The record gives the reactivity of an RNA of 177 nucleotides to 2A3. It was measured as part of the RMDB library RFMREP. High 2A3 reactivity points to a flexible backbone, as in loops and unpaired stretches. The reactions ran in a buffer of 150 mM KOAc, 10 mM MgCl2 and 150 mM bicine (pH 8.5), at 24 C.

RNA sequence: GGGAACGACUCGAGUAGAGUCGAAAACCACCUUACUACUGACGAAGACACCCAUUCCAGUGGACCACUGUGACCCAGGAGGCAUUCAGCCAUCAUGAUGUGGCCUUUACCUCCACUCCUGUCUUGUGCAUCGCAUUAGGUUCGCCUAAUGCGAUGCAAAAGAAACAACAACAACAAC
Reactivity to 2A3 in 0.01 (KOAc 150mM, MgCl2 10mM, bicine 150mM(pH8.5), 24C), signal-to-noise 1, nucleotides 027 to 126: c010c000a040c010c020u030u100a100c020u030a000c040u020g120a040c070g070a030a040g040a010c020a050c000c020c020a050u040u090c020c000a020g020u000g000g030a040c040c000a020c080u050g030u060g170a080c000c000c000a040g010g040a030g020g070c020a040u090u080c020a050g000c000c000a030u050c030a070u290g080a100u160g030u020g040g000c000c010u140u090u040a020c010c000u000c010c010a030c010u000c050c010u080g080u020c030u000u110g020u000